[RMDB]
RNA sequence: GGGAACGACUCGAGUAGAGUCGAAAAAACCCUCUCCAACGAACAAAGAAGACCGCUGGGGCGCCAGGAAGAGUCCGUAGCGAUAGGAGGGGAUGCUAGGAGUCGGCGGCGACCGAAGCGAGGAGGAACACGAGACUGUUCGCAGUCUCGAAAAGAAACAACAACAACAAC
Reactivity to DMS in 0.01 (KOAc 150mM, MgCl2 10mM, bicine 150mM(pH8.5), 24C), signal-to-noise 8, nucleotides 027 to 129: a070a040c050c010c010u000c020u030c030c040a130a110c120g000a070a060c140a060a090a070g050a070a060g000a110c230c130g020c000u000g010g020g000g000c140g030c080c120a080g000g030a080a030g000a080g000u040c020c000g040u040a060g000c040g000a100u040a020g040g020a060g030g020g020g010a050u050g000c040u020a030g000g000a010g000u000c030g020g030c120g000g040c100g010a070c000c020g000a060a040g000c090g010a010g000g010a000g020g020a060a040c140a140
Reactivity to 2A3 in 0.01 (KOAc 150mM, MgCl2 10mM, bicine 150mM(pH8.5), 24C), signal-to-noise 9, nucleotides 027 to 129: a000a000c010c000c000u020c010u000c010c020a110a080c080g080a050a030c070a120a100a060g080a050a010g080a080c020c050g000c040u050g000g020g060g010c020g030c020c030a050g040g040a050a030g020a030g110u030c010c020g110u120a010g010c030g050a100u100a070g020g020a020g000g010g010g000a010u080g010c020u040a050g000g020a050g040u030c030g010g030c000g020g010c020g040a040c000c020g020a030a010g030c020g020a010g000g000a010g010g010a040a020c050a010
Notes:
An RNA of 170 nucleotides, treated with DMS and 2A3 and read out base by base. The reactions ran in a buffer of 150 mM KOAc, 10 mM MgCl2 and 150 mM bicine (pH 8.5), at 24 C. For DMS, 32,083 sequencing reads were counted. For 2A3 the reverse transcriptase was SuperScript II with manganese.